[RMDB]
RNA sequence: GGGAACGACUCGAGUAGAGUCGAAAAACAUAGUUUGGCCGACGUCAUACCAUUGAAGACGAAACGUUAAAGACACCAGCUCGUCUUAUAGGAGCCCAUUUAGCAAAAACAGUCCUGUAGGAACCAAUAAUUGCUGUUUAUUCGUAAACAGCAAUUAAAAAGAAACAACAACAACAAC
Reactivity to DMS in 0.01 (KOAc 150mM, MgCl2 10mM, bicine 150mM(pH8.5), 24C), signal-to-noise 6, nucleotides 027 to 126: a080c070a080u000a050g010u000u010u000g010g030c040c030g010a100c080g010u000c030a060u010a090c070c060a070u010u010g010a100a060g000a030c030g000a040a060a080c110g000u000u000a050a050a100g000a060c070a040c060c060a060g000c070u000c070g010u000c010u000u010a050u000a050g000g000a090g010c050c040c020a090u000u000u000a070g000c080a030a030a050a050a060c100a060g010u000c010c030u000g010u000a040g010g010a050a080c080c080a060a100
Reactivity to 2A3 in 0.01 (KOAc 150mM, MgCl2 10mM, bicine 150mM(pH8.5), 24C), signal-to-noise 3, nucleotides 027 to 126: a000c030a040u160a080g060u030u060u060g040g000c020c030g040a070c010g040u040c000a040u040a190c030c020a110u040u160g090a080a030g020a020c020g000a060a030a000c030g010u030u070a110a080a000g060a030c010a020c060c040a020g010c020u030c030g050u000c050u050u070a050u030a080g050g020a020g000c000c010c040a040u070u070u090a030g020c020a010a040a050a040a050c010a010g060u020c010c000u030g040u030a030g000g060a020a030c020c030a030a020